[RMDB]
RNA sequence: GGGAACGACUCGAGUAGAGUCGAAAAAGGCGGAGGAGGAGGUGGAGGAGGAGCUGGCUCCUCUUCGUCGGCCCGGAUCAUCAGCAAUUCCUCCAGCCUGAUCCAGAGGGCCACCAGGGAGUGCUCCCCGCUACCACGUAUUCGUACGUGGUAGCGGAAAAGAAACAACAACAACAAC
Reactivity to 2A3 in 0.01 (KOAc 150mM, MgCl2 10mM, bicine 150mM(pH8.5), 24C), signal-to-noise 2, nucleotides 027 to 126: a100g060g000c130g000g020a070g010g120a030g070g020a050g000g150u130g070g060a120g000g050a050g000g040a050g020c070u150g180g000c000u010c020c010u010c020u030u000c090g020u050c080g000g020c010c000c010g000g000a040u010c000a000u000c010a000g010c000a000a140u070u120c000c030u030c020c020a020g000c000c020u000g020a000u010c060c000a110g180a240g130g000g000c020c000a010c040c000a060g000g070g000a040g010u090g090c000u000c010c000
Reactivity to DMS in 0.01 (KOAc 150mM, MgCl2 10mM, bicine 150mM(pH8.5), 24C), signal-to-noise 1, nucleotides 027 to 126: a000g000g020c070g020g000a200g010g000a030g000g010a190g000g090u000g020g000a050g000g000a070g080g010a040g000c010u010g030g000c010u000c000c000u030c010u000u000c010g060u010c090g000g000c000c000c020g020g000a020u000c020a040u000c150a050g040c110a150a290u100u020c000c000u000c000c030a160g020c060c020u000g020a050u030c000c050a150g010a190g000g000g010c020c020a110c100c130a210g020g020g000a130g050u020g000c000u000c060c060